[RMDB]
RNA sequence: GGGAACGACUCGAGUAGAGUCGAAAAGCCCGAUGGUUCGCCAUCGGGCAAAAGACUGAGAUCGCAACACUCAAAAGGAGAACAAAACUCCAAAUGCGAUCAAAACCCCAAAGUUCGCUUUGGGGAACAAUAGCACUAUCUUCGGAUAGUGCUAUUGAAAAGAAACAACAACAACAAC
Reactivity to DMS in 0.01 (KOAc 150mM, MgCl2 10mM, bicine 150mM(pH8.5), 24C), signal-to-noise 2, nucleotides 027 to 126: g000c000c030c020g070a040u000g050g000u000u000c140g010c040c000a000u000c010g010g000g020c000a010a000a060a070g000a090c100u030g020a210g000a000u000c000g030c000a040a110c160a150c110u010c220a050a050a160a110g020g000a000g030a100a130c180a090a060a090a090c000u000c010c010a060a120a160u000g000c000g000a000u000c000a060a080a090a150c000c000c000c010a010a010a010g020u000u020c240g010c000u000u020u000g000g010g000g010a020a020
Reactivity to 2A3 in 0.01 (KOAc 150mM, MgCl2 10mM, bicine 150mM(pH8.5), 24C), signal-to-noise 2, nucleotides 027 to 126: g010c010c000c020g010a010u010g010g080u070u070c200g090c130c000a010u000c000g000g000g030c000a000a000a000a020g020a010c100u120g060a020g000a130u000c000g000c010a000a100c070a070c180u180c090a040a070a030a120g000g030a010g030a140a030c030a120a140a070a030c010u010c000c000a020a050a050u010g000c010g000a010u000c000a010a050a020a010c000c020c000c000a010a000a010g000u020u150c270g050c130u000u000u000g000g000g000g000a000a020